[RMDB]
RNA sequence: GGGAACGACUCGAGUAGAGUCGAAAAAGUACUGAAGUAUUCAAUACUUCGGAAAACACCGAAAUAAACAACAAAGUGUUUGCGAAAAUCAAGGAACUCAAUCAUGCUAAUGAUGCUGACAAAGCCGUACGACAUCAUGUUUCGACAUGAUGUCGUAAAAAGAAACAACAACAACAAC
Reactivity to DMS in 0.01 (KOAc 150mM, MgCl2 10mM, bicine 150mM(pH8.5), 24C), signal-to-noise 2, nucleotides 027 to 126: a120g000u000a080c010u010g010a000a030g030u000a050u010u010c190a080a130u010a010c010u010u000c000g000g000a120a030a080a040c040a050c000c000g030a110a100a220u000a040a060a030c240a050a130c090a110a120a160g010u010g000u010u000u010g000c130g030a030a090a090a050u020c070a060a090g000g030a020a070c100u000c110a120a050u000c030a010u000g030c180u010a070a020u000g000a020u000g000c080u020g000a070c110a070a040a130g030c050c010g000
Reactivity to 2A3 in 0.01 (KOAc 150mM, MgCl2 10mM, bicine 150mM(pH8.5), 24C), signal-to-noise 1, nucleotides 027 to 126: a000g000u020a010c000u050g000a000a000g020u020a010u070u220c050a050a100u020a030c000u000u010c000g010g000a140a100a000a010c070a040c000c000g040a090a050a040u190a090a120a020c070a000a020c010a040a290a130g050u020g050u050u110u000g130c080g100a110a020a030a110u130c020a030a050g100g030a020a000c020u000c080a020a070u100c050a020u100g090c020u070a120a030u070g050a040u110g000c020u060g010a010c010a010a080a030g040c050c000g070